[RMDB]
RNA sequence: GGGAACGACUCGAGUAGAGUCGAAAAUCGCUUUCUUCGGUGGGGUCGGUUACUUCAUCUGGAAGGAUUCCCAUAGCCGCAAAGGCUGAUCCUCCCGGAUACACAGAGCACGCAAGGCACUUAGGGCGUUUAUUCAAUCCUUCGGGAUUGAAUAAACAAAAGAAACAACAACAACAAC
Reactivity to DMS in 0.01 (KOAc 150mM, MgCl2 10mM, bicine 150mM(pH8.5), 24C), signal-to-noise 2, nucleotides 027 to 126: u000c130g020c030u010u010u010c040u000u000c150g020g000u000g010g000g020g020u010c060g020g010u000u000a100c060u010u010c110a010u000c030u000g020g010a040a010g000g010a060u030u000c050c100c020a220u010a020g020c020c000g000c160a100a070a170g030g010c000u000g000a050u000c010c020u000c030c000c030g000g010a040u000a080c160a140c090a060g010a080g010c030a040c120g000c050a100a060g000g010c050a030c090u000u010a110g000g010g010c160
Reactivity to 2A3 in 0.01 (KOAc 150mM, MgCl2 10mM, bicine 150mM(pH8.5), 24C), signal-to-noise 1, nucleotides 027 to 126: u050c020g040c050u060u060u080c010u060u020c060g070g010u040g000g030g010g010u060c060g100g050u100u090a070c040u050u060c010a050u000c030u020g020g020a000a000g020g010a000u070u060c080c030c000a090u110a000g000c000c030g020c130a290a080a010g030g000c020u000g020a020u010c000c010u070c030c000c010g050g020a030u040a070c040a000c020a040g090a000g070c020a030c080g020c000a030a060g010g010c010a010c040u070u110a070g090g100g000c030
The record gives the reactivity of an RNA of 177 nucleotides to DMS and 2A3. For 2A3, 1,079 sequencing reads were counted. It was measured as part of the RMDB library RFMREP.